[RMDB]
Conditions: 150 mM KOAc, 10 mM MgCl2 and 150 mM bicine (pH 8.5), 24 C. An RNA of 207 nucleotides, treated with 2A3 and DMS and read out base by base. 2A3 adducts were read by reverse transcription with SuperScript II with manganese. It was measured as part of the RMDB library RNAMAK. The DMS profile rests on 6,049 reads. The 2A3 profile rests on 10,415 reads.

RNA sequence: GGGAACGACUCGAGUAGAGUCGAAAAGUAGUGCAUUCGUGCACUACAAAAAAGCGUACUACCUUGGCCUCGCCACUACCCACCUUAUCUCCCAAAUAGGAGAUAAGAGGUGGACCCGAGGAGGUAUCGCAAAAAAGGAUUCGUUCGCGAAUCCUAAGCAUUCAUCUUUAUUCGUAAAGAUGAAUGCAAAAGAAACAACAACAACAAC
Reactivity to 2A3 in 0.01 (KOAc 150mM, MgCl2 10mM, bicine 150mM(pH8.5), 24C), signal-to-noise 7, nucleotides 027 to 156: g010u000a000g000u000g000c010a020u040u110c280g060u040g000c000a020c010u010a010c000a030a070a000a000a000a010g040c030g010u070a080c040u020a030c010c010u060u100g230g030c020c040u050c030g080c050c010a060c020u110a180c030c030c000a050c020c000u000u000a000u000c010u030c010c020c030a150a300a230u280a140g000g000a000g000a000u000a010a010g010a010g020g010u000g000g010a050c080c040c040g010a000g020g030a020g030g000u020a040u240c090g000c020a020a040a070a030a020a020g000g010a000u000u010c010g040u050u100c300g010c010g130a000a010u000c000c000u020a070a050
Reactivity to DMS in 0.01 (KOAc 150mM, MgCl2 10mM, bicine 150mM(pH8.5), 24C), signal-to-noise 2, nucleotides 027 to 156: g010u000a010g020u010g040c000a060u010u000c300g040u010g000c000a020c010u000a000c000a000a030a050a100a020a140g000c040g010u010a090c030u010a130c000c020u010u000g010g030c080c030u000c090g010c020c000a050c010u010a070c030c010c010a300c130c010u010u010a010u000c000u000c010c000c010a090a140a280u020a020g000g000a030g000a010u000a010a010g000a060g040g040u020g010g010a110c230c040c020g000a040g000g030a300g000g000u000a010u010c010g000c030a000a010a070a070a130a050g000g000a030u000u000c010g020u000u000c300g040c030g030a040a050u000c000c000u000a020a180